[RMDB]
RNA sequence: GGGAACGACUCGAGUAGAGUCGAAAAGUACCCUUGUUCGCAAGGGUACAAAGACAGACUUCACUGUCAUAAAGAAGGUAUCAUCUCAGUUACAAUAAGAGAAAAGCACCUACUUCGGUAGGUGCAAGUCUUGUUUAUCCUUCGGGAUAAACAAGACAAAAGAAACAACAACAACAAC
Reactivity to 2A3 in 0.01 (KOAc 150mM, MgCl2 10mM, bicine 150mM(pH8.5), 24C), signal-to-noise 3, nucleotides 027 to 126: g000u010a000c000c000c000u010u010g010u010u040c140g020c100a000a000g000g000g000u000a000c000a000a000a000g040a000c000a020g030a040c040u090u010c130a030c090u030g060u070c040a040u180a030a120a010g120a030a010g120g040u100a060u180c030a120u020c030u010c040a090g040u110u130a070c060a170a140u140a270a030g040a000g070a090a010a040a030g000c000a000c000c010u010a000c000u040u070c180g090g000u010a000g000g000u000g020c000a000a000
Reactivity to DMS in 0.01 (KOAc 150mM, MgCl2 10mM, bicine 150mM(pH8.5), 24C), signal-to-noise 2, nucleotides 027 to 126: g000u000a010c000c000c000u000u000g040u000u010c240g030c010a000a020g010g000g000u000a020c000a020a080a060g010a030c000a030g000a140c090u000u030c030a120c000u000g000u000c080a100u020a010a030a060g000a060a020g000g000u010a050u000c130a070u000c030u020c010a130g000u000u030a060c150a090a090u020a110a070g010a050g000a080a090a060a160g000c000a010c000c000u000a010c000u010u000c150g020g010u000a010g000g000u000g000c000a010a040